[RMDB]
RNA sequence: GGGAACGACUCGAGUAGAGUCGAAAAAAGGACAUUAAAUUUGUUAUACCUGCUCUACAGCAUGCAUUUAUGAAACAUAAGGGCGGUGAUUCAACUGACUUCAUAGCCCUCAUUAUGGCUUAUGGCAUCUUAGAGUUCAGUUCGCUGAACUCUAAGAAAAAGAAACAACAACAACAAC
Reactivity to 2A3 in 0.01 (KOAc 150mM, MgCl2 10mM, bicine 150mM(pH8.5), 24C), signal-to-noise 2, nucleotides 027 to 126: a000a000g120g000a040c030a030u080u150a100a070a220u060u080u040g030u000u050a060u060a140c010c000u020g020c010u010c030u050a080c070a040g020c000a030u070g020c020a020u070u090u160a090u160g090a110a040a050c000a030u050a060a010g010g010g010c010g000g030u030g040a010u000u060c030a120a180c260u200g020a020c010u050u010c020a000u020a030g000c010c020c000u010c000a010u010u060a020u080g030g000c000u080u040a060u110g010g000c000a020
Reactivity to DMS in 0.01 (KOAc 150mM, MgCl2 10mM, bicine 150mM(pH8.5), 24C), signal-to-noise 2, nucleotides 027 to 126: a040a110g010g010a050c000a060u010u010a080a100a180u010u000u000g020u000u000a140u000a160c020c010u000g000c030u000c080u000a070c170a050g010c050a040u000g020c080a030u010u010u000a040u000g010a130a080a110c090a050u010a070a030g000g000g040c000g000g040u000g010a030u010u000c080a150a130c230u000g000a020c210u000u000c000a010u000a150g010c010c000c030u000c110a070u000u000a020u000g000g000c020u000u000a040u030g000g020c080a090

Description: An RNA of 177 nucleotides, treated with 2A3 and DMS and read out base by base. It was measured as part of the RMDB library 15KREP. For 2A3, 1,554 sequencing reads were counted.